[RMDB]
RNA sequence: GGGAACGACUCGAGUAGAGUCGAAAAAUUACACGGGUAAGUCCUGUACGGCCAGCUCCCUUUGAAUCCCCCAGGGUGGGAACGCAGCAAGGGUAUUAGGUUGUAGCGGCGCGAUGCAGAUCGCUUACCCACCCAGCACUCGCAUUCGUGCGAGUAAAGCGUAGAACGUAUUCGUACGUUCUACGCUAAAAGAAACAACAACAACAAC
Reactivity to 2A3 in 0.01 (KOAc 150mM, MgCl2 10mM, bicine 150mM(pH8.5), 24C), signal-to-noise 1, nucleotides 027 to 156: a000u230u220a040c030a020c130g000g020g000u000a000a000g000u040c020c000u000g000u030a000c000g030g000c010c010a040g020c000u030c000c000c030u010u000u020g110a100a170u110c000c000c000c000c000a000g020g040g000u040g030g000g030a040a010c020g000c010a000g000c000a000a000g000g000g000u040a070u050u020a000g000g010u110u070g050u300a040g000c010g000g000c100g020c000g110a050u050g000c000a000g010a080u050c020g020c000u000u000a010c000c000c000a020c000c000c000a020g030c080a050c000u000c010g000c000a000u020u000c150g080u060g000c000g000a000g000u000a070a100